An RNA of 177 nucleotides, treated with 2A3 and read out base by base. Reactivities are rounded to 0.1 and cut off at 0 and 3. The RNA was probed in 150 mM KOAc, 10 mM MgCl2 and 150 mM bicine (pH 8.5) at 24 C. For 2A3, 317 sequencing reads were counted. Source: RMDB library OK1LIB, as collected in RNAgym. As a SHAPE reagent, 2A3 marks flexible, mostly unpaired nucleotides at the ribose 2'-OH.

RNA sequence: GGGAACGACUCGAGUAGAGUCGAAAACACGUCAGCUGAAGAGUGAAGUUCUUUCUAGAAGACCUACCAGGAGAAAGUGGAUGCAUUUUCUUUUGAGCUUCGAAAUUUGAAGCUAGAGAACAAAGGAGCUUAGCCUCCGGUUCGCCGGAGGCUAAGCAAAAGAAACAACAACAACAAC
Reactivity to 2A3 in 0.01 (KOAc 150mM, MgCl2 10mM, bicine 150mM(pH8.5), 24C), signal-to-noise 1, nucleotides 027 to 126: c060a000c000g120u030c060a050g000c130u170g010a070a050g080a050g010u080g050a120a000g000u070u060c000u000u140u000c060u060a140g050a060a000g000a060c030c000u100a170c040c000a050g070g000a020g000a050a060a040g040u180g030g130a110u060g190c070a050u010u010u010u000c020u060u020u000u000g050a010g000c020u000u020c000g110a140a300a300u070u140u130g040a010a000g020c000u000a060g040a000g000a080a000c000a020a000a060g040g000a040